An RNA of 207 nucleotides, treated with DMS and 2A3 and read out base by base. For 2A3 the reverse transcriptase was SuperScript II with manganese. The 2A3 profile rests on 14,090 reads. Source: RMDB library RNAMAK, as collected in RNAgym.

RNA sequence: GGGAACGACUCGAGUAGAGUCGAAAAGCGUACUACUUCGCUAAUACUGUAAGGGAGCCUUAUAACACUCGUAUCCCAAAUAGGAUACGAGGGAAAGUAAGGCGAAGAACUUACAGGAUAACGAAGUAUCGCAAACAUCAAUGUUCGCAUUGAUGAAGCAAAGAUAUAGAUUCGUCUAUAUCUUUGCAAAAGAAACAACAACAACAAC
Reactivity to DMS in 0.01 (KOAc 150mM, MgCl2 10mM, bicine 150mM(pH8.5), 24C), signal-to-noise 3, nucleotides 027 to 156: g030c000g030u000a040c050u000a020c000u010u000c000g040c000u000a100a090u000a070c010u000g020u000a000a020g000g020g000a300g040c000c000u000u000a010u000a070a300c030a070c000u000c000g020u000a030u000c000c020c010a040a140a190u010a040g000g020a030u000a000c020g000a020g010g010g010a030a130a240g020u000a000a000g010g000c000g000a080a120g010a110a120c000u000u000a020c010a010g000g010a160u000a030a000c010g010a020a020g000u000a000u000c030g010c030a140a080a170c020a040u000c010a010a030u000g030u000u010c260g020c010a030u000u000g010a020u000g000a140a180
Reactivity to 2A3 in 0.01 (KOAc 150mM, MgCl2 10mM, bicine 150mM(pH8.5), 24C), signal-to-noise 8, nucleotides 027 to 156: g000c000g070u120a090c040u000a000c000u020u010c000g000c000u010a020a030u210a270c000u000g000u000a000a010g020g000g020a020g000c010c000u040u020a080u040a150a070c070a030c020u000c000g000u000a010u010c010c030c000a200a220a140u270a080g000g000a000u000a000c000g000a010g010g000g000a010a020a010g020u010a000a000g000g000c000g000a040a000g020a010a000c000u000u000a000c000a000g000g000a010u010a020a010c010g050a000a010g010u010a030u250c000g000c000a020a070a030c000a000u000c000a000a000u010g040u090u110c280g010c130a000u010u010g000a000u010g030a050a000